RNA sequence: GGGAACGACUCGAGUAGAGUCGAAAAAGCGCAGGGCAAAACUUCCACGGGCAACUGUGGGACGGCUCUGUAAAAAAGGAGAGGGAGUUCAUGAACAGCAACUCCCACUUCCAGUGGAUCGAAGGCACCUAGUAUAGCUGUUCGCAGCUAUACUAGGAAAAGAAACAACAACAACAAC
Reactivity to DMS in 0.01 (KOAc 150mM, MgCl2 10mM, bicine 150mM(pH8.5), 24C), signal-to-noise 2, nucleotides 027 to 126: a140g020c230g010c010a000g010g020g010c000a090a060a070a060c180u010u010c000c010a020c000g020g010g020c300a050a060c010u000g020u000g000g000g000a010c040g000g010c010u000c000u000g010u020a000a020a050a080a080a080g000g000a000g010a090g040g010g000a010g010u000u000c060a160u000g000a100a090c270a100g010c130a020a000c000u010c000c000c010a030c000u000u010c000c040a100g010u000g000g030a090u000c070g000a080a110g030g010c090a150
Reactivity to 2A3 in 0.01 (KOAc 150mM, MgCl2 10mM, bicine 150mM(pH8.5), 24C), signal-to-noise 1, nucleotides 027 to 126: a000g100c100g030c020a000g030g000g000c010a160a280a200a170c000u020u000c000c000a010c000g000g000g020c050a080a040c080u020g000u010g010g000g000a000c000g000g010c010u000c000u020g020u010a050a000a040a000a000a000g050g010a030g020a030g030g000g010a010g010u000u040c040a060u160g180a170a080c050a050g040c040a030a010c010u000c000c000c010a020c000u030u030c030c000a030g000u040g110g040a080u100c070g040a030a030g090g000c010a050